[RMDB]
RNA sequence: GGGAACGACUCGAGUAGAGUCGAAAAGGCUUGACAACACAGUCUGGUGCCCACGACACGUAAUGUGCCCGGCUGACCAGUUGUCUGAUCCUAAUUAUGAUGCCUUGUUGAUUUCUAUGACUAAUCACUUAUUCUGUCAGUUCGCUGACAGAAUAAGAAAAGAAACAACAACAACAAC
Reactivity to 2A3 in 0.01 (KOAc 150mM, MgCl2 10mM, bicine 150mM(pH8.5), 24C), signal-to-noise 2, nucleotides 027 to 126: g010g010c040u080u070g000a000c010a010a010c000a000c000a010g000u000c060u160g070g030u110g010c030c020c000a010c010g110a040c030a010c060g070u050a060a060u120g000u020g010c000c040c010g000g000c000u000g000a050c000c040a050g020u020u010g020u000c020u000g010a020u030c000c000u030a060a030u100u180a080u140g160a050u090g000c010c000u010u000g040u040u040g030a300u010u030u030c020u030a110u140g100a130c040u130a120a050u090c010a000
Reactivity to DMS in 0.01 (KOAc 150mM, MgCl2 10mM, bicine 150mM(pH8.5), 24C), signal-to-noise 3, nucleotides 027 to 126: g000g020c040u010u010g000a020c040a020a010c030a110c040a020g000u000c010u010g040g020u000g020c010c170c140a070c100g020a100c130a120c140g010u000a150a080u000g010u000g020c010c020c070g010g000c020u000g030a040c030c060a080g000u000u000g000u000c000u010g000a130u010c020c000u000a070a120u000u010a120u010g000a050u000g010c020c010u010u010g010u000u020g000a070u000u010u000c020u030a070u000g000a120c140u000a090a060u010c140a200
This 177-nucleotide RNA was probed chemically with 2A3 and DMS. For 2A3, 1,526 sequencing reads were counted. The RNA was probed in 150 mM KOAc, 10 mM MgCl2 and 150 mM bicine (pH 8.5) at 24 C. It was measured as part of the RMDB library 15KREP. For DMS the reverse transcriptase was MarathonRT.